[RMDB]
RNA sequence: GGGAACGACUCGAGUAGAGUCGAAAAGAUAUGGACUUCUGACCCUGACCCAGCCAUUGUCGGAAACGACAAUGUGCUGCAGGGUCAUCAGGAAGUCCUAAGUCAAAGGAUAGGUUCGCCUAUCCAACUAAUACACGAGCUUCGGCUCGUGUAUUAGAAAAGAAACAACAACAACAAC
Reactivity to DMS in 0.01 (KOAc 150mM, MgCl2 10mM, bicine 150mM(pH8.5), 24C), signal-to-noise 3, nucleotides 027 to 126: g000a050u000a300u000g000g000a020c000u000u000c010u000g000a020c010c000c000u000g000a300c290c300c160a030g010c020c010a010u000u010g000u000c000g010g010a100a090a170c000g000a020c000a010a010u000g000u010g020c000u000g000c020a020g010g000g010u000c010a000u000c250a210g010g000a030a020g010u010c000c000u000a000a090g010u000c020a150a140a150g000g000a000u000a000g010g000u000u010c300g020c020c010u000a000u000c000c010a070a130
Reactivity to 2A3 in 0.01 (KOAc 150mM, MgCl2 10mM, bicine 150mM(pH8.5), 24C), signal-to-noise 2, nucleotides 027 to 126: g010a030u090a070u180g010g000a000c000u050u050c130u300g020a010c000c020c040u010g090a190c080c000c100a000g020c000c000a010u000u000g000u000c010g070g040a080a060a100c010g020a020c000a010a010u110g160u300g000c010u010g000c000a000g000g000g100u020c010a010u040c030a030g110g000a000a000g010u000c010c000u010a050a020g050u020c090a150a120a080g000g000a010u000a010g000g090u070u060c300g120c050c000u000a000u000c010c000a010a010

An RNA of 177 nucleotides, treated with DMS and 2A3 and read out base by base. For DMS, 2,077 sequencing reads were counted. 2A3 adducts were read by reverse transcription with SuperScript II with manganese. The data come from the RNA Mapping Database (RMDB), library TTRDES.